[RMDB]
Source: RMDB library RFM100, as collected in RNAgym. The record gives the reactivity of an RNA of 177 nucleotides to 2A3 and DMS. For DMS the reverse transcriptase was MarathonRT. The reactions ran in a buffer of 150 mM KOAc, 10 mM MgCl2 and 150 mM bicine (pH 8.5), at 24 C. Reactivities are given for positions 27 through 126. 2A3 adducts were read by reverse transcription with SuperScript II with manganese. For DMS, 2,296 sequencing reads were counted.
RNA sequence: GGGAACGACUCGAGUAGAGUCGAAAAGUGGGGCGUGCAAGGCGAGCGCGUGUGCCCACCCUGAGCCCCUCCCGCCGCCUACACCUUGAUCUUAUUUGAUUGGGUCGUGACUCCAGCCCCGCCGAGCGCUUAGUUGUCGUUUCGACGACAACUAAGCAAAAGAAACAACAACAACAAC
Reactivity to 2A3 in 0.01 (KOAc 150mM, MgCl2 10mM, bicine 150mM(pH8.5), 24C), signal-to-noise 4, nucleotides 027 to 126: g030u030g010g000g000g010c050g020u060g020c060a080a040g050g050c030g040a050g040c010g000c020g010u140g080u090g070c020c000c000a020c030c010c000u020g040a020g010c000c000c000c000u010c000c020c000g040c020c010g000c000c000u050a030c030a010c010c010u070u200g020a020u010c010u030u220a220u240u230u220g070a060u020u050g010g000g030u000c030g020u020g060a050c030u010c050c000a010g000c010c000c000c000g000c010c030g010a040g000c050
Reactivity to DMS in 0.01 (KOAc 150mM, MgCl2 10mM, bicine 150mM(pH8.5), 24C), signal-to-noise 1, nucleotides 027 to 126: g020u010g020g020g000g030c000g060u030g010c060a080a050g020g000c020g020a100g000c060g000c040g030u000g000u020g000c020c010c050a060c150c030c060u000g010a130g010c050c000c020c030u000c030c030c020g000c120c060g000c010c010u010a060c060a010c030c000u000u040g010a050u000c000u020u030a050u000u020u020g000a030u030u000g000g010g000u000c070g010u010g000a150c010u050c050c070a090g000c000c010c030c020g010c050c010g010a110g000c110